[RMDB]
Background: The data come from the RNA Mapping Database (RMDB), library TTRINS. Structure probing data (DMS) for a 177-nucleotide construct. The reactions ran in a buffer of 150 mM KOAc, 10 mM MgCl2 and 150 mM bicine (pH 8.5), at 24 C. Values are in units of 0.01, from 0 to 300, in steps of 10.
RNA sequence: GGGAACGACUCGAGUAGAGUCGAAAAGAUAUGGAUACUCUAUAGCUCUAUAAUCAUUUGCAGAAGCGUUUAUCGGAAACGAUAAACGCUUCUGCAAAUGGUAGAGCAUAUAGAGGUAUCCUAAGUCCAAUCAGCUUAUGUUCGCAUAAGCUGAUUGAAAAGAAACAACAACAACAAC
Reactivity to DMS in 0.01 (KOAc 150mM, MgCl2 10mM, bicine 150mM(pH8.5), 24C), signal-to-noise 1, nucleotides 027 to 126: g000a140u010a290u020g000g010a010u010a010c010u000c000u010a010u000a030g020c000u000c010u010a150u000a300a110u000c010a010u000u000u000g060c000a030g000a100a010g060c000g040u010u020u000a000u000c000g020g010a090a100a300c010g020a030u000a010a010a000c010g050c000u010u010c010u010g030c020a010a010a000u010g000g020u000a000g010a020g020c000a030u000a000u000a010g000a020g010g020u000a000u000c000c010u010a040a130g000u010c040